[RMDB]
RNA sequence: GGGAACGACUCGAGUAGAGUCGAAAACUGUAGCUAGGGUACUAUACGUACAGACGUACCGACGUACGCUAGUCGUACCACAUGGAUCGUACACAUGCUAGGUACGAUCGUCGCCAUGGCGCACGCGAUAGAGAGCAAGUUUCGACUUGCUCUCUAUAAAAGAAACAACAACAACAAC
Reactivity to DMS in 0.01 (KOAc 150mM, MgCl2 10mM, bicine 150mM(pH8.5), 24C), signal-to-noise 9, nucleotides 027 to 126: c060u000g010u000a090g010c010u000a030g000g000g010u000a020c020u000a100u010a180c280g000u000a020c030a110g020a150c220g010u000a010c030c040g010a220c290g010u000a010c010g000c040u000a020g010u000c030g010u000a050c010c060a130c090a050u000g000g000a040u000c110g010u000a060c120a080c060a060u010g010c190u000a090g000g010u000a000c000g000a030u000c030g000u000c060g010c100c080a070u010g010g010c060g010c090a050c090g010c160g000
Reactivity to 2A3 in 0.01 (KOAc 150mM, MgCl2 10mM, bicine 150mM(pH8.5), 24C), signal-to-noise 8, nucleotides 027 to 126: c020u040g050u150a010g020c010u030a020g080g060g010u010a010c000u030a030u040a160c030g030u010a020c030a120g280a140c160g030u000a010c000c030g030a040c050g020u040a010c040g040c220u000a000g030u050c020g020u030a030c000c030a060c020a070u060g080g010a070u100c080g080u200a020c140a010c020a100u130g110c080u160a080g010g010u010a000c010g010a020u030c020g040u020c040g000c030c030a150u180g070g000c050g000c040a020c040g050c040g040
This 177-nucleotide RNA was probed chemically with DMS and 2A3. It was measured as part of the RMDB library OK2TRN. The RNA was probed in 150 mM KOAc, 10 mM MgCl2 and 150 mM bicine (pH 8.5) at 24 C.